[RMDB]
Description
Source: RMDB library M2PK90, as collected in RNAgym. Chemical mapping of a 177-nucleotide RNA with 2A3 and DMS. The DMS profile rests on 851 reads. DMS adducts were read by reverse transcription with MarathonRT.
RNA sequence: GGGAACGACUCGAGUAGAGUCGAAAACACAGGCGACUUAAUCGGAGAGCGGUUACACGCGAGGAAGAUGUAAUUAUUACAUCAGUAGACUCGAGAUUACUACAACUUGCGUUGCUAUCUCAAAUAAGAAUAGCAAGCGAUUCGUCGCUUGCUAUUCAAAAGAAACAACAACAACAAC
Reactivity to 2A3 in 0.01 (KOAc 150mM, MgCl2 10mM, bicine 150mM(pH8.5), 24C), signal-to-noise 2, nucleotides 027 to 126: c100a000c020a040g070g060c000g050a030c060u140u150a050a050u110c030g050g000a000g020a010g170c080g030g070u050u140a050c080a000c020g000c000g010a010g000g030a120a090g000a050u010g000u030a040a060u160u300a160u230u060a040c020a020u020c010a010g010u010a010g030a040c000u000c120g030a060g020a080u120u090a010c010u010a010c010a070a110c020u000u050g020c020g040u030u050g000c010u040a070u070c010u030c070a070a130a060u190a070a070
Reactivity to DMS in 0.01 (KOAc 150mM, MgCl2 10mM, bicine 150mM(pH8.5), 24C), signal-to-noise 2, nucleotides 027 to 126: c090a090c080a060g000g010c040g010a060c120u000u000a030a010u000c050g010g010a140g000a120g000c120g000g000u000u020a090c130a080c040g000c010g010a030g020g020a180a120g020a000u010g010u000a010a220u010u000a080u010u010a000c010a020u000c010a080g000u000a020g020a140c060u000c080g000a070g010a120u000u010a080c100u010a040c100a110a120c100u000u000g000c000g000u000u000g010c030u000a100u000c060u000c030a060a100a070u000a120a100
For 2A3 the reverse transcriptase was SuperScript II with manganese. The reactions ran in a buffer of 150 mM KOAc, 10 mM MgCl2 and 150 mM bicine (pH 8.5), at 24 C.